[RMDB]
RNA sequence: GGGAACGACUCGAGUAGAGUCGAAAAUCGAUGUCUUGGGAACAUACAAUGCGUGUUUUCAAGAUCUUAAAGAGAAUCUAUCAUACUCUUCUAACAAUAGUAUACUCAGAUCGCACAUUAACGGUGGCCAAUGUUAAUGGUUCGCCAUUAACAUUGGAAAAGAAACAACAACAACAAC
Reactivity to 2A3 in 0.01 (KOAc 150mM, MgCl2 10mM, bicine 150mM(pH8.5), 24C), signal-to-noise 8, nucleotides 027 to 126: u080c020g030a030u150g020u000c000u010u010g010g000g010a000a010c000a010u160a050c060a170a300u230g110c110g050u010g000u000u000u010u030c000a000a000g020a010u000c010u040u130a090a080a010g060a000g040a050a030u030c030u070a100u090c070a030u050a150c020u020c030u160u070c060u160a110a050c040a110a070u070a090g070u050a030u020a100c060u060c040a020g020a150u060c050g020c070a030c010a110u140u130a170a020c070g110g000u040g060g000
Reactivity to DMS in 0.01 (KOAc 150mM, MgCl2 10mM, bicine 150mM(pH8.5), 24C), signal-to-noise 4, nucleotides 027 to 126: u010c070g010a070u000g000u000c010u000u010g010g000g000a010a020c010a020u000a130c140a170a110u000g020c100g060u000g010u000u000u000u000c000a010a020g000a010u010c170u010u000a070a090a080g010a080g000a130a090u000c050u000a070u000c080a090u000a070c030u000c080u000u010c140u010a070a090c190a040a070u000a050g000u000a070u000a060c060u000c070a060g010a040u000c060g000c060a050c070a050u000u010a030a060c140g010g000u010g000g020